The record gives the reactivity of an RNA of 170 nucleotides to 2A3 and DMS. The data come from the RNA Mapping Database (RMDB), library 15KLIB. For DMS the reverse transcriptase was MarathonRT.
RNA sequence: GGGAACGACUCGAGUAGAGUCGAAAACCAGGGAUUUUCGACCUCAAGUUUCUUGAUCUUCUUCUUUGUCUUCCGGAGCUCCGCCUCGAGUUCCUCCGCUUUCUUUCUUCCACUCACCCACUUCUCGUCCCUUUUCGGUUCGCCGAAAAGAAAAGAAACAACAACAACAAC
Reactivity to 2A3 in 0.01 (KOAc 150mM, MgCl2 10mM, bicine 150mM(pH8.5), 24C), signal-to-noise 9, nucleotides 027 to 129: c010c010a050g030g030g020a030u040u040u040u070c040g050a050c010c010u060c060a070a070g020u020u060u020c010u040u080g070a110u030c020u050u000c000u070u020c010u050u110u100g100u050c020u080u010c040c010g010g000a020g010c010u010c010c020g060c010c010u020c030g010a010g010u030u030c010c000u020c010c010g020c020u050u080u000c000u020u050u010c000u020u000c010c000a040c020u020c010a070c000c010c010a030c000u070u020c020u020c020g080u070c010c000
Reactivity to DMS in 0.01 (KOAc 150mM, MgCl2 10mM, bicine 150mM(pH8.5), 24C), signal-to-noise 9, nucleotides 027 to 129: c020c020a140g020g010g010a050u010u010u010u010c020g000a100c030c060u010c100a090a090g020u040u030u020c010u030u020g040a070u030c030u010u000c030u000u000c050u020u040u040g000u010c030u040u010c030c000g010g010a130g010c050u000c050c060g020c060c030u000c020g000a100g010u000u010c030c020u000c000c020g040c060u000u030u030c030u020u010u010c040u030u010c010c000a060c030u010c030a100c020c010c020a040c060u020u030c030u000c020g040u040c050c020
For 2A3 the reverse transcriptase was SuperScript II with manganese. Conditions: 150 mM KOAc, 10 mM MgCl2 and 150 mM bicine (pH 8.5), 24 C.